[RMDB]
RNA sequence: GGGAACGACUCGAGUAGAGUCGAAAACUCGCCGGGUGGCACGCAAUUUUCUCAGAACACGAACAGCCGUGCCACGACAGCGGCAUGCGGCCCGCGGGCGGGCGGCACCGGUAAUGGCCGCGGCUCAGCACCAGGAUUCGUUCGCGAGUCCUGGUGCAAAAGAAACAACAACAACAAC
Reactivity to 2A3 in 0.01 (KOAc 150mM, MgCl2 10mM, bicine 150mM(pH8.5), 24C), signal-to-noise 6, nucleotides 027 to 126: c030u030c030g010c000c010g070g030g000u010g000g010c010a000c000g030c040a100a130u040u050u200u020c090u040c070a160g080a200a130c180a050c190g060a110a030c030a040g090c100c020g000u000g000c000c000a000c000g010a010c010a030g010c010g010g000c010a010u120g020c000g050g010c020c000c010g030c070g030g060g030c010g000g040g000c000g040g000c020a050c010c020g000g010u170a160a130u180g090g000c000c020g010c010g000g000c030u050c080a030
Reactivity to DMS in 0.01 (KOAc 150mM, MgCl2 10mM, bicine 150mM(pH8.5), 24C), signal-to-noise 3, nucleotides 027 to 126: c010u000c030g030c010c000g000g000g050u020g030g000c000a010c000g000c070a150a060u000u020u020u010c060u010c120a160g000a150a130c220a110c090g010a040a060c230a100g000c090c010g020u000g000c000c010a000c030g000a120c110a120g000c000g010g000c020a260u000g020c010g010g000c050c000c050g010c070g030g000g000c020g010g010g000c040g010g000c040a020c040c010g020g020u000a090a090u030g030g000c000c040g000c040g020g030c160u010c090a170
Description: The record gives the reactivity of an RNA of 177 nucleotides to 2A3 and DMS. It was measured as part of the RMDB library OK1LIB. The DMS profile rests on 4,802 reads. For 2A3 the reverse transcriptase was SuperScript II with manganese.